RNA sequence: GGGAACGACUCGAGUAGAGUCGAAAACUUAUCCGGUUUUAACGCUGUUUUAUUGGCGCAAAGGUUUACGGAUAAACAACUAAUAAUUAAACCUUUUGUGUGCGAAACGUGGUUGUUAAACGUACUCACUGCCCCCAGGGAUUCGUCCCUGGGGGAACUGGUAGUGUUUCUUCGGAAACACUACCAGAAAAGAAACAACAACAACAAC
Reactivity to 2A3 in 0.01 (KOAc 150mM, MgCl2 10mM, bicine 150mM(pH8.5), 24C), signal-to-noise 1, nucleotides 027 to 156: c000u000u000a000u000c010c020g000g020u010u000u000u010a050a070c040g000c030u020g120u200u120u210u080a150u150u240g020g010c000g000c050a020a000a000g000g000u010u010u010a000c020g000g010a000u030a060a120a030c020a020a010c040u130a050a100u120a200a030u220u090a000a000a020c000c000u020u120u030u060g020u020g000u000g020c070g070a070a090a020c080g040u080g020g000u130u050g000u020u100a050a080a010c010g010u020a040c010u010c090a050c110u100g020c000c000c000c000c000a000g000g000g000a060u070u040c060g050u000c060c000c000u000g000g030g000g000g000a000a000